[RMDB]
Source: RMDB library TTRDEL, as collected in RNAgym. Chemical mapping of a 177-nucleotide RNA with 2A3 and DMS. The RNA was probed in 150 mM KOAc, 10 mM MgCl2 and 150 mM bicine (pH 8.5) at 24 C. DMS adducts were read by reverse transcription with MarathonRT. For 2A3, 2,659 sequencing reads were counted.

RNA sequence: GGGAACGACUCGAGUAGAGUCGAAAAGAUAUGGAUCUCGUCGGGAGCGUUUUGCUCGGAAACGAGCGGACGCGAAGAACGAGCGAGAUCCUAAGUCAAAACGCAGAGACGUUCGCGUCUCUGCGAAUCUCUUAGACAGGUUCGCCUGUCUAAGAGAAAAAGAAACAACAACAACAAC
Reactivity to 2A3 in 0.01 (KOAc 150mM, MgCl2 10mM, bicine 150mM(pH8.5), 24C), signal-to-noise 1, nucleotides 027 to 126: g000a000u030a000u080g010g000a000u000c010u000c000g040u030c030g020g050g080a210g040c010g010u050u070u200u300g000c070u020c000g000g000a020a010a010c000g010a000g000c000g010g010a000c010g040c050g040a040a040g020a010a000c030g010a050g230c010g000a000g000a000u000c000c000u010a050a020g010u000c000a000a020a100a100c010g000c000a010g000a000g020a000c010g050u080u120c300g020c020g100u000c000u040c010u000g010c000g000a000a010
Reactivity to DMS in 0.01 (KOAc 150mM, MgCl2 10mM, bicine 150mM(pH8.5), 24C), signal-to-noise 2, nucleotides 027 to 126: g000a030u000a150u000g000g010a000u000c000u000c000g010u000c000g030g000g010a070g020c010g020u020u000u010u000g030c000u000c000g000g000a010a030a060c000g020a000g010c000g000g010a010c010g010c000g010a080a090g020a110a150c000g000a080g020c020g000a000g000a010u000c000c000u000a020a080g010u010c020a070a090a150a190c020g030c010a000g000a020g000a020c000g010u000u010c240g010c040g010u010c010u000c000u000g000c000g010a040a040